[RMDB]
RNA sequence: GGGAACGACUCGAGUAGAGUCGAAAACGCUGGGCUAUCCGAGCGUAGUCGUGGUAGUGCAAUGAUGCGUCUGAAGCGCGCACGGACGUUGAGCACUACCACGGGAUCGAAGCUCGAUAGCCUGUGCUGAAGCGCGCACGGCAACCGAAAGGUGCGAGUUAGUAACCCGGUUCGCCGGGUUACUAACAAAAGAAACAACAACAACAAC
Reactivity to 2A3 in 0.01 (KOAc 150mM, MgCl2 10mM, bicine 150mM(pH8.5), 24C), signal-to-noise 2, nucleotides 027 to 156: c010g000c000u040g000g000g010c010u010a030u120c230c130g010a000g010c020g090u150a100g160u130c000g000u000g000g000u000a010g000u010g010c040a240a300u000g000a010u010g000c010g000u000c000u030g070a220a050g000c000g000c030g000c030a010c000g000g010a000c010g000u020u050g020a000g000c000a000c000u000a000c000c000a000c000g000g020g000a140u300c090g120a150a030g000c000u000c000g000a000u010a010g000c000c000u000g000u000g000c000u010g010a140a080g000c020g000c000g000c020a000c010g010g000c000a030a000c000c000g030a100a030a040g010g000u010g000c020g000a120